[RMDB]
RNA sequence: GGGAACGACUCGAGUAGAGUCGAAAAUCUCAAAACUAUCGGAAUGCAAAAAGCCGAGGAUGUCAAGAAACAAGACAUUGAACGUCAAGAACGUGAUUAUGAGUUAUUCUUGCAGAACUUGGAGGAGGAUCCUGAGCUUCGCCAAGGCGUCAACUUAAAAUUUAUUAAUGUUCGCAUUAAUAAAUUUAAAAGAAACAACAACAACAAC
Reactivity to 2A3 in 0.01 (KOAc 150mM, MgCl2 10mM, bicine 150mM(pH8.5), 24C), signal-to-noise 3, nucleotides 027 to 156: u020c010u030c020a090a070a040a080c060u100a130u120c000g020g030a100a070u120g090c080a160a120a050a050a020g040c020c020g010a020g040g040a050u050g080u130c030a030a030g020a040a110a070c070a060a020g060a050c020a050u020u140g060a070a020c020g020u030c060a070a100g080a130a030c040g010u020g060a080u050u200a060u120g050a040g040u070u040a080u140u050c000u020u060g010c060a050g020a200a090c000u020u040g000g020a000g030g010a000g020g040a090u090c040c030u070g040a060g070c000u020u010c030g050c000c000a010a000g020g010c000g030u070c040a070a090c020u080u110a020
Reactivity to DMS in 0.01 (KOAc 150mM, MgCl2 10mM, bicine 150mM(pH8.5), 24C), signal-to-noise 2, nucleotides 027 to 156: u000c020u000c010a070a130a110a140c080u000a100u000c020g010g000a070a080u000g010c040a100a130a160a200a160g000c030c050g020a070g000g030a090u010g010u000c020a070a110g010a140a100a150c060a070a160g010a050c030a050u010u000g000a090a020c050g020u000c010a100a140g000a110a080c020g010u000g010a120u010u000a040u020g020a070g020u020u000a080u000u010c000u000u000g000c070a090g010a050a090c010u000u000g030g000a070g010g000a060g020g010a050u010c050c040u010g020a110g000c010u000u000c030g010c030c000a040a050g010g010c040g010u000c040a030a110c020u010u000a050
The record gives the reactivity of an RNA of 207 nucleotides to 2A3 and DMS. The reactions ran in a buffer of 150 mM KOAc, 10 mM MgCl2 and 150 mM bicine (pH 8.5), at 24 C. DMS (dimethyl sulfate) methylates the pairing face of unpaired adenines and cytosines. The DMS profile rests on 4,185 reads.